[RMDB]
RNA sequence: GGGAACGACUCGAGUAGAGUCGAAAAGUUGGGUUCGUAACUCAAUAAAUUACCCUAGCGCUUAAAAACACUCACCUCCCGCAACCACUUCCGGGUAGGCUAUUUGGGGGUGUUGAGCGUUGGAUGGGUAAUUAUAAGCCUUCGGGCUUAUAAUUACAAAAGAAACAACAACAACAAC
Reactivity to 2A3 in 0.01 (KOAc 150mM, MgCl2 10mM, bicine 150mM(pH8.5), 24C), signal-to-noise 9, nucleotides 027 to 126: g020u010u010g000g010g020u040u100c120g090u170a020a020c000u010c020a000a000u080a050a080a030u100u110a120c010c010c010u010a020g000c000g020c020u030u020a120a120a060a040a010c000a000c010u000c000a140c000c010u010c010c000c010g030c050a060a130c070c070a100c090u160u050c060c010g000g000g050u090a050g040g020c040u090a150u220u180u190g140g000g010g000g000u000g000u000u020g000a000g000c000g010u010u040g070g030a080u110g120g020
Reactivity to DMS in 0.01 (KOAc 150mM, MgCl2 10mM, bicine 150mM(pH8.5), 24C), signal-to-noise 9, nucleotides 027 to 126: g000u010u000g000g000g000u000u010c300g000u030a150a090c010u000c010a010a020u000a040a110a100u010u010a060c000c000c000u010a040g000c020g010c010u000u000a050a080a110a070a040c020a020c020u000c000a250c010c010u000c010c010c020g010c240a080a080c120c090a070c120u010u010c240c040g000g010g010u030a030g010g000c270u010a050u020u040u030g020g010g000g010g010u000g000u000u000g000a010g010c010g010u000u000g000g020a120u020g010g000